The data come from the RNA Mapping Database (RMDB), library TTRINS. An RNA of 177 nucleotides, treated with DMS and read out base by base. The DMS profile rests on 1,117 reads. Values cover nucleotides 27 to 126.
[RMDB]
RNA sequence: GGGAACGACUCGAGUAGAGUCGAAAAGAUAUGGACUACAAGCACGAUGAAGAGCUUUUGACGACGGAGAAGUGUCGGAAACGACACGUAACGUCGAUAAGCUCCAUCGUGCUUGUAGUCCUAAGUCGGUGAUGCGUAUGUUCGCAUACGCAUCACCAAAAGAAACAACAACAACAAC
Reactivity to DMS in 0.01 (KOAc 150mM, MgCl2 10mM, bicine 150mM(pH8.5), 24C), signal-to-noise 1, nucleotides 027 to 126: g010a060u010a300u000g000g020a000c010u000a010c000a020a000g000c000a050c010g010a020u020g000a300a100g030a010g010c000u000u000u000u010g020a300c070g010a030c000g020g000a090g000a070a230g000u010g000u000c000g000g000a120a140a190c010g000a010c020a000c000g000u010a080a280c010g000u030c010g040a080u000a000a000g020c020u000c000c000a000u000c000g000u000g000c000u000u010g000u020a020g000u000c000c000u000a030a080g020u000c120